RNA sequence: GGGAACGACUCGAGUAGAGUCGAAAAUCUUCGGCUGCAUCGGCGUGUGAAAUACCGAUAACAGCAAUGCCGUUUUCUUCCGCCUGCAUGCGCUCAAAAAUCAAGUCUUGGUAGGCCUUGAUUGUCUUCUUACCACGACCCUUAACUUCCAUUGUGAGAAUUGAUGCUGAUUCGUCAGCAUCAAUUCAAAAGAAACAACAACAACAAC
Reactivity to DMS in 0.01 (KOAc 150mM, MgCl2 10mM, bicine 150mM(pH8.5), 24C), signal-to-noise 1, nucleotides 027 to 156: u010c030u000u000c040g060g020c010u010g040c040a030u000c020g000g020c000g000u010g050u030g020a180a150a050u000a050c000c010g010a060u000a150a060c040a040g040c030a080a070u010g020c000c110g010u010u000u020u010c010u010u010c030c010g000c060c000u000g060c050a060u030g030c040g020c020u030c040a020a040a050a050a070u000c040a060a050g010u000c030u010u000g000g040u000a080g010g030c080c040u010u010g020a090u010u010g000u000c030u000u010c050u000u010a160c040c000a030c040g030a070c020c020c000u000u000a060a080c070u000u000c010c030a250u010u000g000u000g000a170
Reactivity to 2A3 in 0.01 (KOAc 150mM, MgCl2 10mM, bicine 150mM(pH8.5), 24C), signal-to-noise 3, nucleotides 027 to 156: u040c020u100u080c020g040g000c000u080g020c030a040u000c010g030g000c020g040u100g020u050g200a090a100a050u160a090c000c020g060a060u090a130a080c070a020g070c060a030a080u110g020c010c030g030u020u040u060u000c010u080u010c010c030g010c000c010u050g020c030a020u080g010c040g000c030u060c090a090a130a060a000a040u080c080a070a030g030u000c010u030u080g040g030u070a050g030g000c020c040u070u100g030a090u070u060g030u010c020u050u010c010u040u050a030c000c020a030c050g040a060c000c020c000u090u110a070a060c040u130u000c040c010a110u070u100g050u060g070a050
Structure probing data (DMS and 2A3) for a 207-nucleotide construct. For 2A3, 3,180 sequencing reads were counted. Reactivities are given for positions 27 through 156. Conditions: 150 mM KOAc, 10 mM MgCl2 and 150 mM bicine (pH 8.5), 24 C.